[RMDB]
RNA sequence: GGGAACGACUCGAGUAGAGUCGAAAACAGCUACGCAAUUGUCCCCGAAUUGCCACGUAAAGCUUCCGGUCAAAAUUAUGCUACAGGUAGCAUAAUCUUGUCGGCUACUGCCGACACCGUCGUAGCCUCUUGCGUUCGGCUUCGGUCGGACGCAAGAAAAAGAAACAACAACAACAAC
Reactivity to DMS in 0.01 (KOAc 150mM, MgCl2 10mM, bicine 150mM(pH8.5), 24C), signal-to-noise 3, nucleotides 027 to 126: c080a070g020c030u000a090c100g010c050a050a030u010u000g000u020c000c000c000c000g000a050a050u020u010g010c020c110a080c080g010u000a070a100a110g000c010u010u000c040c030g000g010u020c130a060a070a090a000u000u000a000u000g000c030u000a080c070a130g010g020u000a020g000c000a000u000a010a000u010c060u010u000g020u030c010g020g010c010u020a020c170u010g010c000c030g000a020c020a030c040c020g010u020c060g000u000a060g000c010c100
Reactivity to 2A3 in 0.01 (KOAc 150mM, MgCl2 10mM, bicine 150mM(pH8.5), 24C), signal-to-noise 4, nucleotides 027 to 126: c030a020g040c050u110a020c020g000c020a020a100u020u080g080u090c000c000c000c000g020a020a040u050u040g000c010c030a050c040g030u050a070a030a000g000c000u040u000c010c010g000g000u060c020a000a000a000a000u000u000a000u000g000c000u000a030c040a100g200g050u030a010g010c010a000u000a000a000u000c010u010u030g010u010c000g000g000c000u130a100c030u180g000c000c000g000a010c000a000c010c010g060u070c050g020u010a020g010c000c000
Chemical mapping of a 177-nucleotide RNA with DMS and 2A3.
For 2A3 the reverse transcriptase was SuperScript II with manganese.